[RMDB]
RNA sequence: GGGAACGACUCGAGUAGAGUCGAAAAAAAAAGAUAUGGACAAGCGGGAGUCGGUAUGGACGAAUUAACUCGGAAACGAGUUAACUAUCCAUACGACGACGAAGAACGCUUGUCCUAAGUCAAAAAACUAUGUUUUAAAGUUCGCUUUAAAACAUAGAAAAGAAACAACAACAACAAC
Reactivity to DMS in 0.01 (KOAc 150mM, MgCl2 10mM, bicine 150mM(pH8.5), 24C), signal-to-noise 2, nucleotides 027 to 126: a090a040a060a090a080g020a070u050a300u010g030g000a020c010a020a010g000c000g000g000g000a100g020u000c000g030g040u000a000u000g010g030a040c040g000a050a010u020u000a000a000c000u000c000g000g000a140a100a190c000g020a010g000u000u000a000a020c080u000a300u000c010c000a000u000a010c000g000a210c030g000a040c000g010a060a090g000a120a190c000g000c000u010u010g010u000c000c000u000a030a090g000u010c040a000a090a080a080a090a100